An RNA of 177 nucleotides, treated with DMS and read out base by base.

RNA sequence: GGGAACGACUCGAGUAGAGUCGAAAAUGGUGAAGGUGCGCCUCAAACAGAGAAGGCCUUGAACGGGAUUGCGUCUUCUUCCUCUUCCGCCCCUCAGCAGAAGACAGAGGAGGAGACAGGUGCUCUCCAAAGCCUACGCUUUCGAGCGUAGGCUUUGAAAAGAAACAACAACAACAAC
Reactivity to DMS in 0.01 (KOAc 150mM, MgCl2 10mM, bicine 150mM(pH8.5), 24C), signal-to-noise 1, nucleotides 027 to 126: u020g010g020u000g000a090a030g000g000u000g010c050g030c180c030u000c070a060a100a110c240a090g000a080g010a120a170g000g010c000c050u000u010g000a090a110c140g000g000g000a050u000u010g000c040g000u000c000u000u000c000u010u000c000c020u000c030u000u000c030c080g010c040c020c050c150u010c040a080g010c100a080g010a080a050g030a120c170a130g000a060g000g000a090g020g000a020g000a010c100a100g010g020u010g000c020u000c000u000c010
For DMS the reverse transcriptase was MarathonRT.
For DMS, 1,022 sequencing reads were counted.
Reactivities are given for positions 27 through 126.
The RNA was probed in 150 mM KOAc, 10 mM MgCl2 and 150 mM bicine (pH 8.5) at 24 C.